[RMDB]
RNA sequence: GGGAACGACUCGAGUAGAGUCGAAAAGACGCCUUUAGAAGAAGAGGCUAGGGGGUAUUCCGGUGUGGGAUACUUAGUAAUAUGCAACGCUAAUUGCAUAAGAUUGUAGGACGGACUUUACAGUCUUUAGAGAUAAGCACGUUCGCGUGCUUAUCAAGUUUCAAAGCAGAUUCGUCUGCUUUGAAACAAAAGAAACAACAACAACAAC
Reactivity to DMS in 0.01 (KOAc 150mM, MgCl2 10mM, bicine 150mM(pH8.5), 24C), signal-to-noise 2, nucleotides 027 to 156: g030a130c060g010c020c010u000u000u000a110g020a140a190g030a150a110g000a050g010g040c040u000a130g000g010g010g020g020u010a060u000u000c010c020g030g050u020g040u000g000g030g000a040u000a030c030u010u030a050g010u000a080a170u000a040u000g000c000a020a060c090g010c180u000a100a160u010u000g020c010a070u000a040a080g010a090u000u000g000u000a050g000g000a180c060g000g000a110c080u000u000u000a070c030a040g010u010c010u000u000u000a100g020a160g010a010u000a010a010g020c000a010c000g030u000u000c300g020c020g020u000g000c020u000u000a010u000c000a040a100
Reactivity to 2A3 in 0.01 (KOAc 150mM, MgCl2 10mM, bicine 150mM(pH8.5), 24C), signal-to-noise 4, nucleotides 027 to 156: g040a020c070g030c010c010u070u050u100a180g020a260a010g030a050a010g010a040g020g010c020u050a100g050g020g000g010g010u020a030u030u070c060c050g140g090u210g030u210g060g000g010a010u010a040c010u030u060a050g020u040a050a110u030a030u110g000c010a030a010c060g040c180u150a080a110u100u020g000c000a010u010a050a030g030a060u040u110g020u080a030g000g050a030c060g010g070a010c030u070u090u090a050c060a010g010u000c000u020u070u040a100g010a000g000a030u000a000a000g000c000a000c000g000u040u050c110g000c000g100u000g000c000u010u000a000u010c000a000a000